[RMDB]
RNA sequence: GGGAACGACUCGAGUAGAGUCGAAAACGGCGUAUGGCGUUUACCGGACACACCUUCCCCGGGAAUGUGUGAAUACGGGCGUAUGACUUUAGAAAUGGGGGCGUGUGCUGCGCCAGCAGGUAAGGCAGGCACUCGUCCUGGCUGGUGACGGGAGAGCCAUUUAUUGCACGUUCGCGUGCAAUAAAUGAAAAGAAACAACAACAACAAC
Reactivity to DMS in 0.01 (KOAc 150mM, MgCl2 10mM, bicine 150mM(pH8.5), 24C), signal-to-noise 2, nucleotides 027 to 156: c060g010g010c050g040u000a060u000g030g020c010g000u000u000u010a080c060c020g020g010a220c050a050c020a070c020c030u000u010c020c030c100c130g000g020g000a040a030u000g010u000g010u000g030a110a090u010a110c060g000g010g010c060g040u000a050u010g010a090c060u000u000u000a100g000a060a150a140u000g020g010g020g000g000c020g010u000g000u010g020c000u010g010c100g050c010c010a090g010c070a300g000g000u000a070a050g020g010c030a260g020g010c040a050c000u000c010g020u060c030c000u000g000g040c010u000g010g000u020g020a140c030g000g010g000a100g000a070g020c080
Reactivity to 2A3 in 0.01 (KOAc 150mM, MgCl2 10mM, bicine 150mM(pH8.5), 24C), signal-to-noise 3, nucleotides 027 to 156: c020g050g010c020g020u110a050u100g080g020c020g010u010u060u090a090c020c010g000g020a030c000a000c000a000c020c030u020u040c000c020c020c050g120g030g020a030a040u030g010u000g000u010g020a050a050u150a100c010g030g010g000c020g040u040a060u130g080a080c040u100u100u180a080g040a050a100a080u160g030g010g000g000g010c010g000u010g000u000g000c000u020g040c060g020c060c010a030g040c050a020g060g120u100a070a060g030g000c010a000g000g020c000a020c010u020c020g000u000c000c000u000g010g020c030u030g010g020u010g010a070c040g020g020g000a050g000a000g020c020